[RMDB]
RNA sequence: GGGAACGACUCGAGUAGAGUCGAAAAGUAUGCUCACCAAUUAUGACCUUUCAUUUAUUAAUGCAAAGAUUAAUUACCAAUACGUAGUGUAUGUUGGUGACCCUGCGCAGUUGCCAGCACCACGCACGCUACUUAAUGGUUCUCUUUCACCUAAAGACCUCCGCUAUCCGUUCGCGGAUAGCGGAGGAAAAGAAACAACAACAACAAC
Reactivity to 2A3 in 0.01 (KOAc 150mM, MgCl2 10mM, bicine 150mM(pH8.5), 24C), signal-to-noise 1, nucleotides 027 to 156: g030u050a000u230g070c120u090c020a180c070c000a060a070u080u060a230u120g080a110c000c000u050u100u080c030a020u140u230u190a300u030u300a100a020u110g000c010a000a090a000g010a020u100u080a110a000u030u080a150c000c000a070a000u080a020c030g010u030a000g010u010g020u030a000u080g220u250u080g040g000u070g020a150c060c020c000u040g000c110g010c090a140g300u270u220g080c000c000a030g100c000a030c040c000a000c050g010c000a000c000g020c000u030a040c000u030u080a060a000u050g000g000u000u050c000u000c000u030u060u080c100a070c030c000u050a150a000a000g220a050
Source information
Source: RMDB library OK3TST, as collected in RNAgym. The record gives the reactivity of an RNA of 207 nucleotides to 2A3. The RNA was probed in 150 mM KOAc, 10 mM MgCl2 and 150 mM bicine (pH 8.5) at 24 C. Reactivities are rounded to 0.1 and cut off at 0 and 3. Reactivities are given for positions 27 through 156. For 2A3, 341 sequencing reads were counted.